[RMDB]
RNA sequence: GGGAACGACUCGAGUAGAGUCGAAAAACAUGCGUUGUUUACUGCACAGGAAGCAAAACAACAUAGAGAUGCAGUACAGGUUCUAAAACGAAAGUAUUUGGGUAGUCCACUUAGUGAUAUUAGUGGAGGUGUAUCUUGGAUUCGUCCAAGAUACACCAAAAGAAACAACAACAACAAC
Reactivity to 2A3 in 0.01 (KOAc 150mM, MgCl2 10mM, bicine 150mM(pH8.5), 24C), signal-to-noise 3, nucleotides 027 to 126: a000c060a020u150g030c080g100u060u010g000u080u120u060a030c000u020g010c020a040c060a070g160g140a150a010g100c110a010a040a000a060c030a090a000c000a010u150a010g150a000g020a050u060g030c000a010g000u000a090c000a040g000g080u030u000c060u140a110a040a060a030c110g030a170a050a070g040u030a190u040u120u020g130g010g000u050a070g060u000c000c000a000c000u010u040a070g050u020g200a040u080a050u250u000a070g000u000g010g000a050
Reactivity to DMS in 0.01 (KOAc 150mM, MgCl2 10mM, bicine 150mM(pH8.5), 24C), signal-to-noise 2, nucleotides 027 to 126: a190c090a060u050g040c220g000u030u010g000u000u040u000a080c050u000g000c000a040c120a170g000g020a170a110g000c100a060a020a090a060c100a060a090c050a140u040a090g000a130g000a300u000g070c000a000g000u000a050c240a000g010g030u000u000c030u010a000a010a010a070c110g030a030a090a100g000u000a090u000u010u010g010g000g000u000a030g060u000c010c050a000c010u000u010a090g010u010g010a030u030a130u030u040a020g010u020g020g000a120